[RMDB]
RNA sequence: GGGAACGACUCGAGUAGAGUCGAAAAAGAUGUCUAAGCCCUGACCAGAGGACCAGUCUGGGAACCAGUAAAGGCUCAUGAGUUUACUGUGGCAAGUGCACCCAAGAGCCCAGCAUGGGGCUGGCAAUGAUAAACGGGAGUUCGCUCCCGUUUAUCAAAAAGAAACAACAACAACAAC
Reactivity to 2A3 in 0.01 (KOAc 150mM, MgCl2 10mM, bicine 150mM(pH8.5), 24C), signal-to-noise 2, nucleotides 027 to 126: a000g150a050u140g000u040c030u080a040a100g000c000c000c000u000g070a070c010c020a000g010a000g040g070a030c000c050a030g090u020c000u000g000g000g090a030a050c040c010a000g030u100a040a060a010g020g000c000u000c010a050u090g050a020g090u040u060u010a050c000u010g050u090g110g030c030a080a040g030u060g030c020a020c000c020c000a010a040g010a000g000c000c000c030a000g000c000a040u210g030g000g040g000c000u000g010g000c000a030a090
Reactivity to DMS in 0.01 (KOAc 150mM, MgCl2 10mM, bicine 150mM(pH8.5), 24C), signal-to-noise 4, nucleotides 027 to 126: a110g000a120u030g010u000c030u000a050a090g020c000c000c020u020g010a180c020c010a070g010a040g010g040a260c120c110a100g000u020c010u000g000g000g030a100a120c160c090a050g030u020a070a100a210g020g010c010u010c030a130u000g030a030g000u000u010u010a030c020u000g030u020g040g000c130a150a030g020u000g020c090a030c010c010c000a010a100g000a040g000c010c000c010a160g000c090a110u040g010g010g010g000c000u010g000g010c040a070a090
The record gives the reactivity of an RNA of 177 nucleotides to 2A3 and DMS. Reactivities are given for positions 27 through 126. For 2A3 the reverse transcriptase was SuperScript II with manganese. The RNA was probed in 150 mM KOAc, 10 mM MgCl2 and 150 mM bicine (pH 8.5) at 24 C. The data come from the RNA Mapping Database (RMDB), library RFM100.